The data come from the RNA Mapping Database (RMDB), library OK1LIB.
This 177-nucleotide RNA was probed chemically with DMS and 2A3.

[RMDB]
RNA sequence: GGGAACGACUCGAGUAGAGUCGAAAAGAAAAAGAGGCAGAGCCUUUGCUCUCAUACUCCCCAUUGUAUUGGGUGGAUUGCUCUGUUAUACACUGUGGGCAGGUUACUUAGGAUGUCCUCAGAGAAACAUUAGUACGGGUUUCGACCCGUACUAAUGAAAAGAAACAACAACAACAAC
Reactivity to DMS in 0.01 (KOAc 150mM, MgCl2 10mM, bicine 150mM(pH8.5), 24C), signal-to-noise 6, nucleotides 027 to 126: g020a060a060a050a110a060g010a100g010g000c060a030g000a030g020c010c130u000u000u030g000c080u000c010u000c090a080u010a140c040u010c060c030c020c080a080u020u030g010u010a050u020u010g000g010g000u000g010g010a080u000u000g000c000u000c020u010g000u000u010a080u020a130c150a110c000u000g010u000g010g010g010c000a020g010g010u020u030a080c160u020u020a120g010g010a120u000g000u000c000c010u010c020a010g000a070g000a140a100a160
Reactivity to 2A3 in 0.01 (KOAc 150mM, MgCl2 10mM, bicine 150mM(pH8.5), 24C), signal-to-noise 6, nucleotides 027 to 126: g130a000a070a020a000a000g130a060g050g000c030a000g000a030g030c010c020u030u030u100g130c000u010c000u000c020a010u020a060c060u130c010c040c010c030a040u040u180g040u050a080u070u090g030g020g020u050g020g110a070u010u100g010c000u000c000u020g030u030u040a090u000a060c100a010c020u020g000u060g020g010g000c020a010g050g080u150u140a080c070u100u160a120g160g080a110u030g020u020c000c010u000c000a010g030a000g020a050a090a000
The RNA was probed in 150 mM KOAc, 10 mM MgCl2 and 150 mM bicine (pH 8.5) at 24 C.